[RMDB]
RNA sequence: GGGAACGACUCGAGUAGAGUCGAAAACCCUGGGACCAGCGCGCACGCCGGGGCAGAGCUCUAGGCGUCACCCCGAGGCCGCCGACAACUGAAUAAACAAGAUGUAGCGCUGCGAUCUGUCAAGGGCAUAUUUUUUCUUUUUCGAAAGAAAAAAUAUAAAAGAAACAACAACAACAAC
Reactivity to 2A3 in 0.01 (KOAc 150mM, MgCl2 10mM, bicine 150mM(pH8.5), 24C), signal-to-noise 8, nucleotides 027 to 126: c000c000c000u010g020g000g020a020c000c010a010g010c000g010c010g010c020a020c010g020c010c010g010g000g000g000c040a060g020a030g110c010u030c060u130a130g100g000c000g030u020c010a030c000c000c000c010g000a040g050g000c020c020g000c030c020g030a020c020a100a020c040u110g080a100a120u170a170a110a050c090a070a040g050a110u100g030u100a060g030c010g000c000u020g030c040g050a210u000c010u020g100u070c050a090a050g030g010g010c030
Reactivity to DMS in 0.01 (KOAc 150mM, MgCl2 10mM, bicine 150mM(pH8.5), 24C), signal-to-noise 7, nucleotides 027 to 126: c000c000c010u010g000g000g000a080c060c010a010g010c040g030c030g020c070a070c040g010c040c010g010g000g000g020c040a160g020a200g020c000u000c080u010a100g020g010c020g000u010c080a170c040c020c010c020g010a150g000g000c020c020g010c040c040g000a080c090a080a100c080u010g000a100a110u040a080a080a100c140a100a060g010a090u010g000u010a070g000c020g000c010u000g000c100g000a100u010c020u000g020u020c050a100a070g000g000g010c130
Description: Structure probing data (2A3 and DMS) for a 177-nucleotide construct. Reactivities are given for positions 27 through 126. DMS adducts were read by reverse transcription with MarathonRT. The data come from the RNA Mapping Database (RMDB), libraries RFM100 and RFMREP. The RNA was probed in 150 mM KOAc, 10 mM MgCl2 and 150 mM bicine (pH 8.5) at 24 C.